[RMDB]
Structure probing data (2A3 and DMS) for a 177-nucleotide construct. Source: RMDB library M2PK50, as collected in RNAgym. DMS adducts were read by reverse transcription with MarathonRT. The RNA was probed in 150 mM KOAc, 10 mM MgCl2 and 150 mM bicine (pH 8.5) at 24 C.
RNA sequence: GGGAACGACUCGAGUAGAGUCGAAAAGAGACGUUGUUCGCAACGUCUCGCAAUAUGCGGCGCUCGCGGGCCGCACUGAGAUCGUCGGGAUCCAGACCGACAACACCCAAGAAUUCGUUCUUGGGAAGAGAGUUAUGAUGUUCGCAUCAUAACUCUCAAAAGAAACAACAACAACAAC
Reactivity to 2A3 in 0.01 (KOAc 150mM, MgCl2 10mM, bicine 150mM(pH8.5), 24C), signal-to-noise 4, nucleotides 027 to 126: g010a000g000a000c010g010u010u020g020u060u080c220g030c100a000a000c010g000u010c000u020c000g000c000a030a080u150a060u170g000c010g010g000c100g020c140u110c100g110c140g030g090g000c020c000g090c000a010c040u110g100a080g060a190u130c090g020u020c010g000g030g000a030u040c010c030a020g090a080c000c000g020a000c000a000a030c050a050c000c000c000a010a000g010a010a020u110u120c170g060u080u000c030u010u000g010g010g000a040a020
Reactivity to DMS in 0.01 (KOAc 150mM, MgCl2 10mM, bicine 150mM(pH8.5), 24C), signal-to-noise 3, nucleotides 027 to 126: g000a010g000a030c000g040u010u030g030u000u020c210g020c020a000a000c000g010u000c000u010c010g000c170a080a100u010a080u000g010c000g000g000c030g000c060u010c240g040c300g000g030g030c000c000g000c000a000c110u010g010a140g010a070u000c110g010u000c020g020g010g010a080u020c020c040a160g000a060c000c000g010a010c030a130a080c300a150c030c000c000a020a010g000a030a020u000u010c200g020u000u000c000u000u010g010g020g010a030a050